[RMDB]
RNA sequence: GGGAACGACUCGAGUAGAGUCGAAAAGCUGCAACUGCGACGGCUACACCAACAGUAUCUACACGCUGUCCAUCAGCAGCGCCACGCAGUUUGGCAACGUGCCGUGGUACAGCGAGGCCUGCUCGUCGGUAACACACGAAUUCGUUCGUGUGUUACCAAAAGAAACAACAACAACAAC
Reactivity to 2A3 in 0.01 (KOAc 150mM, MgCl2 10mM, bicine 150mM(pH8.5), 24C), signal-to-noise 6, nucleotides 027 to 126: g000c000u010g000c020a090a040c050u050g020c070g080a040c020g050g010c010u050a020c030a040c060c030a040a050c020a050g080u100a100u130c060u130a050c070a010c120g000c010u010g020u020c040c020a140u110c050a030g010c000a000g030c010g000c020c000a010c010g040c020a040g010u060u120u110g080g000c060a090a070c120g110u070g030c050c020g030u040g030g000u120a060c020a010g020c010g020a020g000g020c000c030u030g010c000u010c030g110u030c060
Reactivity to DMS in 0.01 (KOAc 150mM, MgCl2 10mM, bicine 150mM(pH8.5), 24C), signal-to-noise 4, nucleotides 027 to 126: g020c010u000g000c060a100a050c060u000g030c100g020a130c030g010g020c020u000a130c060a110c060c040a080a050c130a070g000u000a100u010c050u010a080c160a220c050g000c020u000g000u000c020c030a040u000c130a140g000c010a050g020c180g000c010c040a050c070g010c080a050g000u000u000u020g010g000c050a100a130c190g010u010g010c020c090g010u000g010g000u000a040c070a050g000c010g010a130g020g010c050c030u000g010c010u000c060g010u030c150

The record gives the reactivity of an RNA of 177 nucleotides to 2A3 and DMS. DMS adducts were read by reverse transcription with MarathonRT. For 2A3, 10,359 sequencing reads were counted.